[RMDB]
RNA sequence: GGGAACGACUCGAGUAGAGUCGAAAAGCGUACUACCCAGACAUGCUCUGAGGAUAAGACAGAAACUCCCAAAUAGGAGUUUCAAUGACGUCCGAAAGAGCAACAGCUGGGUAUCGCAAAACCUGUGGGCGUUAGGUUCGCCUAACGCCCACAGGAACAGUGGCAUUAAGUUCGCUUAAUGCCACUGAAAAGAAACAACAACAACAAC
Reactivity to DMS in 0.01 (KOAc 150mM, MgCl2 10mM, bicine 150mM(pH8.5), 24C), signal-to-noise 1, nucleotides 027 to 156: g010c020g020u020a090c110u040a010c000c000c000a020g000a080c070a300u000g010c000u000c020u010g020a300g000g000a000u000a070a280g000a290c030a070g040a020a000a000c000u010c040c060c000a090a100a300u000a040g000g000a060g010u000u000u030c010a120a100u030g030a120c080g010u010c010c000g000a220a090a030g030a040g020c000a060a050c040a120g010c000u000g050g010g030u000a000u000c000g000c010a130a070a090a080c000c010u010g070u000g040g020g040c010g050u000u000a000g030g040u000u000c250g010c030c000u030a000a030c040g080c030c010c010a000c000a000g010g010a010a080
Reactivity to 2A3 in 0.01 (KOAc 150mM, MgCl2 10mM, bicine 150mM(pH8.5), 24C), signal-to-noise 1, nucleotides 027 to 156: g010c030g050u090a080c010u000a000c050c000c000a010g000a050c060a080u080g020c000u000c000u020g010a050g010g000a030u080a140a120g050a060c010a000g040a040a000a000c010u020c050c020c130a090a090a080u300a090g000g000a000g000u000u000u000c020a010a070u070g030a020c070g060u000c030c040g040a020a100a000g010a000g000c030a010a000c010a000g040c010u020g030g030g020u070a030u210c000g000c020a000a030a000a070c000c000u000g000u000g060g010g000c000g000u000u000a000g100g000u010u130c140g040c040c000u020a000a000c030g070c000c000c000a030c000a020g000g000a000a000